This 177-nucleotide RNA was probed chemically with 2A3 and DMS.

RNA sequence: GGGAACGACUCGAGUAGAGUCGAAAAGAACUCACCAGCAAAUGUUUACGACAAGAUUCGACAUUUGCAAAUUACGUAGCGAUCUUCCAGAUUCUUGUCGAAACGUUCCCAAUCGCUACGCCCUAAAUAGAUCACGGUAUUUCGAUACCGUGAUCUAAAAAGAAACAACAACAACAAC
Reactivity to 2A3 in 0.01 (KOAc 150mM, MgCl2 10mM, bicine 150mM(pH8.5), 24C), signal-to-noise 2, nucleotides 027 to 126: g010a090a070c010u030c080a070c030c050a020g050c000a000a000a050u090g030u080u100u110a090c020g000a020c010a030a040g010a110u090u070c060g010a010c030a110u070u140u070g030c020a030a020a020u130u060a010c020g040u030a010g030c030g030a020u010c060u160u070c140c020a030g000a160u030u080c020u090u010g070u040c000g010a130a100a040c000g000u020u020c000c000c020a000a010u040c040g000c000u020a000c000g040c000c000c000u080a060a070a030
Reactivity to DMS in 0.01 (KOAc 150mM, MgCl2 10mM, bicine 150mM(pH8.5), 24C), signal-to-noise 1, nucleotides 027 to 126: g010a140a200c120u000c060a080c110c030a140g000c000a030a030a040u000g000u000u000u000a300c030g000a000c040a020a030g000a080u000u000c030g000a050c050a060u000u000u040g000c060a050a020a050u020u010a010c000g030u010a000g030c000g020a000u000c130u000u040c100c150a100g020a060u000u000c000u000u000g020u010c010g040a000a090a210c120g000u000u000c000c000c020a150a040u000c010g010c000u010a030c000g000c060c020c030u000a020a060a050
DMS adducts were read by reverse transcription with MarathonRT. Reactivities are given for positions 27 through 126.